[RMDB]
RNA sequence: GGGAACGACUCGAGUAGAGUCGAAAAGAUCGGAAACAGCAGCAGGUGAGUGCGCCUUAUGUGAAGGAUCGGCUGAAACACGAGGAAAUACUGAGCCAACGCAAGACGGUAGCCGAACAGUAGCAACAAAACGCUUACGUGUUCGCACGUAAGCGAAGAUAUCGAAGCAGUUCGCUGCUUCGAUAUCAAAAGAAACAACAACAACAAC
Reactivity to 2A3 in 0.01 (KOAc 150mM, MgCl2 10mM, bicine 150mM(pH8.5), 24C), signal-to-noise 5, nucleotides 027 to 156: g040a040u130c060g050g020a080a010a060c050a070g030c010a000g000c000a010g020g020u050g060a180g030u060g020c040g040c010c000u080u080a220u190g030u020g030a030a000g010g020a060u040c020g010g000c050u070g050a110a130a000c110a020c110g050a060g030g100a070a090a020u140a060c040u030g000a020g020c000c010a020a010c020g000c040a040a020g050a040c030g030g000u040a020g010c000c020g010a020a000c010a020g030u050a000g060c050a000a060c010a060a120a020a010c030g000c000u010u010a010c010g000u020g050u060u100c200g030c120a000c000g000u000a000a000g000c000g000a010a000
Reactivity to DMS in 0.01 (KOAc 150mM, MgCl2 10mM, bicine 150mM(pH8.5), 24C), signal-to-noise 2, nucleotides 027 to 156: g000a090u000c070g010g030a080a050a100c100a120g030c040a080g060c050a080g040g020u000g010a110g010u000g030c080g060c000c010u000u010a150u000g010u000g090a020a040g010g000a080u020c050g070g030c030u000g010a080a090a030c040a130c060g060a200g000g010a070a100a120u000a080c030u000g040a140g040c030c000a060a110c000g000c040a040a130g020a110c010g020g040u010a050g010c000c000g010a080a080c030a120g030u000a090g010c080a070a130c060a050a030a070a210c020g000c040u000u000a010c000g020u010g000u010u000c270g000c050a030c000g010u000a010a000g010c000g000a010a030